[RMDB]
RNA sequence: GGGAACGACUCGAGUAGAGUCGAAAAAAACUUUUGUGACUUGCUGCAACGGGACUAAUCUCCUCACCGAGGCUAAGCAAGUAAAAUACGCCUCUCAUAUCCUUACCUGAGGGUGGUAAGGAAAUAACCUGCAACGCUUCCUUCGGGAAGCGUUGAACAUCAUAUUUAGUUUCGACUAAAUAUGAUGAAAAGAAACAACAACAACAAC
Reactivity to 2A3 in 0.01 (KOAc 150mM, MgCl2 10mM, bicine 150mM(pH8.5), 24C), signal-to-noise 4, nucleotides 027 to 156: a000a000a000c130u150u080u050u110g080u060g090a060c000u010u000g000c010u010g000c000a060a030c030g010g000g010a010c020u090a090a100u080c040u040c050c010u090c060a060c030c050g010a020g060g000c020u050a030a010g000c000a030a040g050u130a010a040a010a000u120a010c070g020c010c010u010c010u000c030a050u050a080u210c010c010u000u000a010c000c010u030g050a120g010g100g020u020g000g000u000a000a000g000g020a010a020a010u030a000a020c030c050u050g020c010a000a000c010g000c000u000u020c000c000u020u060c160g030g000g010a000a000g000c000g000u000u000g000a010a010
Reactivity to DMS in 0.01 (KOAc 150mM, MgCl2 10mM, bicine 150mM(pH8.5), 24C), signal-to-noise 2, nucleotides 027 to 156: a060a060a080c050u020u000u000u000g060u010g010a170c040u000u000g010c020u000g010c080a080a120c130g000g000g000a080c030u010a180a080u000c060u000c010c010u000c050a100c080c080g010a060g020g000c020u020a070a080g000c020a030a060g020u000a060a050a050a050u000a060c100g000c020c010u010c020u010c020a120u020a120u000c000c010u000u000a040c030c040u000g010a150g010g050g020u010g030g010u000a020a020g000g000a020a040a060u010a050a080c030c040u000g020c000a010a000c010g040c000u010u000c000c000u000u000c280g040g020g020a000a000g000c000g010u000u000g000a030a120

Notes:
An RNA of 207 nucleotides, treated with 2A3 and DMS and read out base by base. For DMS the reverse transcriptase was MarathonRT. Conditions: 150 mM KOAc, 10 mM MgCl2 and 150 mM bicine (pH 8.5), 24 C. Source: RMDB library M2RFPK, as collected in RNAgym. Values cover nucleotides 27 to 156. 2A3 adducts were read by reverse transcription with SuperScript II with manganese. High DMS reactivity at an A or C suggests that its Watson-Crick edge is free.